[RMDB]
RNA sequence: GGGAACGACUCGAGUAGAGUCGAAAACGGCUGCCCAUAGAUCGGAGCCUGGCGACGUAAACCGUCGUGUCAUAUGUAAGCACCAGGUGCCAUCUCCGAGUCGAAUACCGCCGACUUGCGCGUUGCGUCUUGCGUUCCGCUUCGGUGGGACGCAAGAAAAAGAAACAACAACAACAAC
Reactivity to 2A3 in 0.01 (KOAc 150mM, MgCl2 10mM, bicine 150mM(pH8.5), 24C), signal-to-noise 2, nucleotides 027 to 126: c010g010g020c000u050g040c010c000c000a030u120a040g060a010u060c080g000g000a010g020c000c000u020g030g000c000g000a010c000g040u050a040a020a080c050c000g020u010c000g010u020g040u030c020a040u140a040u170g140u070a070a010g020c000a000c000c000a000g000g030u030g010c010c000a050u010c010u000c020c010g010a010g050u020c000g000a020a020u040a070c000c010g010c010c000g030a050c000u040u070g000c010g000c000g080u020u150g000c020g040
Reactivity to DMS in 0.01 (KOAc 150mM, MgCl2 10mM, bicine 150mM(pH8.5), 24C), signal-to-noise 5, nucleotides 027 to 126: c040g020g010c020u000g010c030c030c020a110u040a070g010a070u010c060g010g010a090g020c110c060u000g010g000c010g010a020c050g000u020a090a130a160c260c010g010u010c050g030u010g010u010c090a160u000a070u020g010u010a090a100g000c070a140c010c030a040g000g030u020g000c030c030a040u020c000u000c050c000g010a030g010u010c030g000a070a100u020a140c050c040g000c030c030g000a090c100u000u010g000c000g010c050g010u000u010g010c050g000